RNA sequence: GGGAACGACUCGAGUAGAGUCGAAAAGAUAUGGACAGGAGGGAGCUGCUGUCGGAAACGACAGACAGCGUUGAUCUCCGUCCUAAGUCAAAAGAAGUGUGGACUAGUUCGCUAGUCCACACUUCAAGUCGAUAUGCACGUUCGCGUGCAUAUCGACAAAAGAAACAACAACAACAAC
Reactivity to 2A3 in 0.01 (KOAc 150mM, MgCl2 10mM, bicine 150mM(pH8.5), 24C), signal-to-noise 1, nucleotides 027 to 126: g030a000u030a020u060g030g000a030c210a280g050g030a030g020g020g000a030g070c030u000g000c010u010g020u040c010g010g000a110a080a000c010g030a000c000a030g060a070c010a010g090c000g000u020u000g020a050u020c000u040c000c010g010u000c010c000u000a040a010g040u020c020a010a000a000a300g080a050a000g020u000g000u000g030g000a010c020u000a000g080u040u100c280g060c200u010a010g000u090c000c000a000c000a000c000u000u020c020a000a000
Reactivity to DMS in 0.01 (KOAc 150mM, MgCl2 10mM, bicine 150mM(pH8.5), 24C), signal-to-noise 1, nucleotides 027 to 126: g000a010u010a300u010g000g000a020c010a180g050g020a030g000g000g000a020g010c000u000g000c000u000g010u010c010g010g010a060a070a220c000g000a000c000a010g020a130c020a000g100c000g010u000u010g000a040u000c000u000c000c010g000u000c000c020u040a010a090g020u000c010a130a090a140a110g000a000a040g020u010g040u000g010g000a020c010u010a000g010u010u010c260g020c030u020a010g000u000c000c000a000c000a000c000u020u000c000a020a070
Description:
This 177-nucleotide RNA was probed chemically with 2A3 and DMS. Conditions: 150 mM KOAc, 10 mM MgCl2 and 150 mM bicine (pH 8.5), 24 C. For DMS, 945 sequencing reads were counted. Source: RMDB library TTRDEL, as collected in RNAgym.